[RMDB]
RNA sequence: GGGAACGACUCGAGUAGAGUCGAAAACGAUCAGUACGUUCGCGUACUGAUCGAAGCUACUGGAGACAGUAGCCAGUCGCAGACCUUGUUUGGCGGUAACAAGGAAUACAUAAAGUAGGCAGGUCUUUAUGACUGCGACAACCGCCAUCCUGCCUUAUAGAAUGAAAGGAUUCGUCCUUUCAUUCUAAAAAGAAACAACAACAACAAC
Reactivity to DMS in 0.01 (KOAc 150mM, MgCl2 10mM, bicine 150mM(pH8.5), 24C), signal-to-noise 2, nucleotides 027 to 156: c000g010a000u000c000a000g000u000a000c000g030u000u000c300g080c020g040u000a000c000u000g000a000u000c010g000a010a060g010c000u000a020c020u010g000g010a300g010a290c010a050g010u010a010g000c000c040a060g000u000c010g070c030a080g010a290c000c010u000u000g020u000u000u000g040g020c090g060g030u000a040a030c010a000a010g000g000a170a010u000a020c020a030u000a020a070a080g000u010a050g000g030c010a050g020g020u030c050u000u000u010a080u000g000a250c010u000g030c000g020a070c040a140a140c050c010g000c070c050a070u000c020c010u000g000c010c010u010u000a170
Reactivity to 2A3 in 0.01 (KOAc 150mM, MgCl2 10mM, bicine 150mM(pH8.5), 24C), signal-to-noise 2, nucleotides 027 to 156: c020g000a000u000c000a000g000u000a000c000g000u010u100c190g000c000g070u000a000c000u000g000a000u000c000g000a000a000g020c000u010a000c000u000g020g010a020g010a030c000a000g000u010a000g000c000c010a030g020u000c000g000c010a010g010a080c000c000u010u000g020u000u030u070g060g020c020g020g040u040a040a000c000a000a000g010g020a010a000u000a000c010a000u010a010a010a010g010u030a090g020g000c000a010g000g010u030c000u000u020u010a020u030g060a070c010u010g020c010g010a000c020a030a040c030c030g000c000c000a010u050c000c000u000g000c000c000u010u070a060